The data come from the RNA Mapping Database (RMDB), library OK1LIB. This 177-nucleotide RNA was probed chemically with 2A3 and DMS. For 2A3 the reverse transcriptase was SuperScript II with manganese. For DMS the reverse transcriptase was MarathonRT. For 2A3, 6,892 sequencing reads were counted. The RNA was probed in 150 mM KOAc, 10 mM MgCl2 and 150 mM bicine (pH 8.5) at 24 C. 2A3 is a SHAPE reagent: it acylates the 2'-hydroxyl of flexible nucleotides of all four kinds.
RNA sequence: GGGAACGACUCGAGUAGAGUCGAAAAAUGACAUUCACUUUGGAUCUUGGCAUAAUGAUCUGCGAUCUACGCCUUGGUCACAGUCCAUUCCAAGACAGCGAACGGAGGAAAUACAUAUCGCAGACUCGGUGAGUAGUAGGUUCGCCUACUACUCACCAAAAGAAACAACAACAACAAC
Reactivity to 2A3 in 0.01 (KOAc 150mM, MgCl2 10mM, bicine 150mM(pH8.5), 24C), signal-to-noise 6, nucleotides 027 to 126: a000u150g030a010c050a040u120u090c050a110c120u090u060u170g070g010a040u030c020u020u050g040g000c040a120u060a170a140u300g070a090u010c010u020g020c010g000a010u010c030u100a040c060g010c000c000u000u020g060g000u020c020a010c030a060g050u000c040c020a060u050u000c000c000a000a050g130a080c040a040g050c010g060a050a030c010g080g020a030g030g100a030a090a010u160a050c070a060u160a010u040c000g000c000a000g000a040c020u020c130
Reactivity to DMS in 0.01 (KOAc 150mM, MgCl2 10mM, bicine 150mM(pH8.5), 24C), signal-to-noise 2, nucleotides 027 to 126: a040u060g000a070c150a140u000u030c050a000c090u000u030u000g010g030a040u030c000u000u000g000g110c170a090u020a110a180u040g000a060u020c030u000g010c010g000a010u000c120u000a090c180g020c000c000u000u000g000g000u010c040a160c010a050g030u010c000c030a130u030u020c060c020a140a190g000a080c010a160g020c080g010a050a070c000g000g030a020g000g000a020a010a220u010a030c140a050u000a040u000c000g000c000a010g000a130c080u030c170